[RMDB]
RNA sequence: GGGAACGACUCGAGUAGAGUCGAAAAGCCAAUCCGGCAUGGAGUAAGGCAGUCUUUAUUUCGCCUUACAAUUCACAGAAUGCUGUGUCUCGUUCAAUGCUGGGUCUUACCACUCAGACUGUUGAUUAUGUUAAUAUAGCUUCGGCUAUAUUAACAUAAAAGAAACAACAACAACAAC
Reactivity to 2A3 in 0.01 (KOAc 150mM, MgCl2 10mM, bicine 150mM(pH8.5), 24C), signal-to-noise 8, nucleotides 027 to 126: g050c020c000a010a040u020c020c010g010g010c020a020u030g030g010a110g030u000a010a010g010g000c020a020g050u040c100u060u300u100a290u070u170u110c050g000c000c000u000u000a010c010a000a030u040u020c010a020c010a020g140a300a180u190g130c020u000g010u010g010u020c020u030c100g140u160u040c030a070a040u030g000c000u000g000g000g010u010c010u020u060a060c020c010a060c030u090c030a050g050a260c050u080g040u070u030g020a050u020u020
Reactivity to DMS in 0.01 (KOAc 150mM, MgCl2 10mM, bicine 150mM(pH8.5), 24C), signal-to-noise 5, nucleotides 027 to 126: g000c060c080a170a080u000c070c020g000g000c010a050u000g000g020a160g020u010a010a010g010g020c010a120g020u010c190u020u010u010a140u010u010u000c130g010c000c010u000u010a010c010a180a060u000u010c060a050c050a040g000a230a130u010g010c010u000g020u010g000u000c050u000c090g000u010u000c050a060a020u000g010c000u000g010g010g000u000c030u000u010a180c140c160a070c080u010c070a050g010a100c110u000g010u010u000g010a110u010u000